[RMDB]
RNA sequence: GGGAACGACUCGAGUAGAGUCGAAAAAUGUGGCACCAAUGUGCCUCUACAAUUAGGAUUUUCAACUGGUGUGAACUUUGUUGUUCAGCCAGUUGGUGUUGUAGACACUGAGUGGGGUAACAUGUUAACCUUAGCAAGAGUUCGCUCUUGCUAAGGUAAAAGAAACAACAACAACAAC
Reactivity to DMS in 0.01 (KOAc 150mM, MgCl2 10mM, bicine 150mM(pH8.5), 24C), signal-to-noise 2, nucleotides 027 to 126: a050u000g020u000g000g030c020a050c000c050a050a100u000g000u000g010c090c100u000c010u000a010c000a020a030u000u000a130g020g010a220u000u010u000u010c000a000a010c000u000g000g010u010g010u000g020a020a010c000u000u000u010g010u000u010g010u000u010c000a300g010c000c000a000g010u000u000g000g010u000g010u000u000g000u000a010g000a050c020a020c030u000g010a080g000u000g000g010g010g020u000a060a050c050a030u000g000u000u000a100
Reactivity to 2A3 in 0.01 (KOAc 150mM, MgCl2 10mM, bicine 150mM(pH8.5), 24C), signal-to-noise 2, nucleotides 027 to 126: a000u030g000u020g020g000c040a040c040c000a040a070u110g000u000g020c020c020u010c000u000a010c010a030a010u130u090a110g210g030a140u110u040u020u240c010a010a020c000u010g000g050u100g040u040g090a010a010c000u060u100u240g190u300u080g000u000u220c000a000g000c000c000a000g000u000u010g000g000u010g010u000u000g010u000a020g000a000c010a010c060u040g050a060g180u080g020g020g020g000u020a040a000c000a020u010g090u070u130a050